[RMDB]
Chemical mapping of a 177-nucleotide RNA with 2A3 and DMS. It was measured as part of the RMDB libraries RFM100 and RFMREP. Conditions: 150 mM KOAc, 10 mM MgCl2 and 150 mM bicine (pH 8.5), 24 C.

RNA sequence: GGGAACGACUCGAGUAGAGUCGAAAAUACCUGUAGGGGGAUGGAAUCUGCUAAAAGUGUUCUGGAGUCGUUCUUGGAUAUCUGCUUGGUAUCUUCUCAAUAUCUUGACCAUCUGUGACAAUUUUAAUACCGUAGAUUCAUUCGUGAAUCUACGGUAAAAAGAAACAACAACAACAAC
Reactivity to 2A3 in 0.01 (KOAc 150mM, MgCl2 10mM, bicine 150mM(pH8.5), 24C), signal-to-noise 3, nucleotides 027 to 126: u160a060c000c000u010g050u090a060g010g030g010g010g060a020u060g020g010a030a090u020c010u040g000c010u110a090a120a020a000g110u060g080u130u080c040u040g080g000a000g000u000c020g000u000u000c000u000u030g030g010a010u010a020u030c050u030g160c100u200u150g010g000u070a060u020c000u100u050c060u030c030a080a090u080a060u120c040u070u100g050a020c020c030a030u050c020u060g060u060g060a010c040a080a080u020u070u140u190a100a050
Reactivity to DMS in 0.01 (KOAc 150mM, MgCl2 10mM, bicine 150mM(pH8.5), 24C), signal-to-noise 3, nucleotides 027 to 126: u020a070c020c000u010g010u030a060g020g020g000g000g000a050u010g010g040a180a110u000c030u000g010c050u020a070a050a100a090g010u010g020u000u020c060u020g000g000a030g020u000c010g000u000u000c010u010u000g010g020a080u010a000u000c020u010g030c140u010u020g020g030u000a020u000c010u010u010c050u020c060a070a060u030a070u000c050u020u010g000a090c020c040a020u000c070u000g000u020g010a100c140a060a020u020u010u000u010a060a170